Chemical mapping of a 177-nucleotide RNA with 2A3 and DMS.
[RMDB]
RNA sequence: GGGAACGACUCGAGUAGAGUCGAAAACUUUCUGCAUAAAUGCCCUCAUUAGAGGCACUUAUAAAGUCAGGAAGAAAGCACCCACCUGCCAUGGUGCGGGGUUCAAAACGAAGGAAAGGAGGGGAAGGACAUGAGAUUACUUCGGUAAUCUCAUGUCAAAAGAAACAACAACAACAAC
Reactivity to 2A3 in 0.01 (KOAc 150mM, MgCl2 10mM, bicine 150mM(pH8.5), 24C), signal-to-noise 1, nucleotides 027 to 126: c010u020u040u000c000u030g000c000a020u020a020a060a000u040g020c030c000c020u040c050a150u090u280a070g010a040g010g000c000a000c000u080u070a050u060a070a190a030g100u270c020a010g050g000a010a000g030a070a040a010g000c030a060c000c010c000a010c010c000u060g010c040c030a180u250g090g010u170g050c000g030g010g000g000u000u020c040a090a070a050a050c040g060a060a020g070g000a060a030a040g000g010a010g000g010g020g010a050a000g060
Reactivity to DMS in 0.01 (KOAc 150mM, MgCl2 10mM, bicine 150mM(pH8.5), 24C), signal-to-noise 1, nucleotides 027 to 126: c020u000u010u000c000u010g000c000a230u000a040a000a000u000g000c200c000c010u000c080a230u000u000a100g010a040g000g000c020a000c040u000u000a000u000a110a130a080g050u020c000a000g000g000a050a030g010a110a030a120g050c040a050c000c040c010a180c110c000u000g000c050c140a200u000g000g000u020g000c070g000g000g000g030u040u000c160a000a110a170a070c200g010a050a050g000g000a020a010a080g020g010a110g010g000g000g010a020a130g020

Source information:
For DMS, 682 sequencing reads were counted. The 2A3 profile rests on 1,096 reads. Conditions: 150 mM KOAc, 10 mM MgCl2 and 150 mM bicine (pH 8.5), 24 C.